[RMDB]
RNA sequence: GGGAACGACUCGAGUAGAGUCGAAAAUGACGUUAAACUGCUGACUCAUACAUACUGACACCGGUUGCUCAACAGGCUGUGUGGGACAAUAGAAUAACAAGGCUGUCAAUUUGAGCUUUACGGCUGCAAAACCUGCAGUACUUCGGUACUGCAGGAACAUAGAGAGUCACUUCGGUGACUCUCUAUGAAAAGAAACAACAACAACAAC
Reactivity to 2A3 in 0.01 (KOAc 150mM, MgCl2 10mM, bicine 150mM(pH8.5), 24C), signal-to-noise 4, nucleotides 027 to 156: u100g030a000c050g010u050u060a080a080a070c060u070g010c010u030g050a040c010u010c010a020u040a080c000a020u100a060c060u110g090a060c030a040c070c050g070g000u100u100g010c030u020c060a030a070c010a080g080g000c020u010g020u030g000u040g060g000g030a020c030a040a060u080a100g100a040a040u060a070a020c030a040a030g040g000c010u030g020u070c030a010a040u050u050u130g000a010g010c020u030u010u030a030c020g040g000c040u010g020c050a050a020a060a140c000c000u000g000c000a000g000u000a000c000u000u060c180g060g000u000a000c000u010g000c000a000g000g010a000a000
Reactivity to DMS in 0.01 (KOAc 150mM, MgCl2 10mM, bicine 150mM(pH8.5), 24C), signal-to-noise 2, nucleotides 027 to 156: u000g020a130c080g020u000u000a030a050a280c020u010g030c020u000g020a100c030u000c020a080u000a090c060a120u000a090c040u000g010a090c030a090c050c020g010g010u000u010g000c060u000c010a050a070c040a050g000g020c030u000g020u010g040u000g020g010g000a150c040a020a080u000a060g010a060a160u010a040a110c030a110a180g040g000c030u020g000u000c010a080a130u000u000u010g000a080g000c010u000u000u000a110c140g030g000c030u000g010c040a040a060a110a110c010c000u000g010c000a000g010u000a000c010u000u000c210g070g010u000a000c000u000g000c000a000g000g000a010a040
Overview:
The record gives the reactivity of an RNA of 207 nucleotides to 2A3 and DMS. Source: RMDB library M2RFPK, as collected in RNAgym. The 2A3 profile rests on 2,662 reads. Conditions: 150 mM KOAc, 10 mM MgCl2 and 150 mM bicine (pH 8.5), 24 C. The DMS profile rests on 2,967 reads. For 2A3 the reverse transcriptase was SuperScript II with manganese.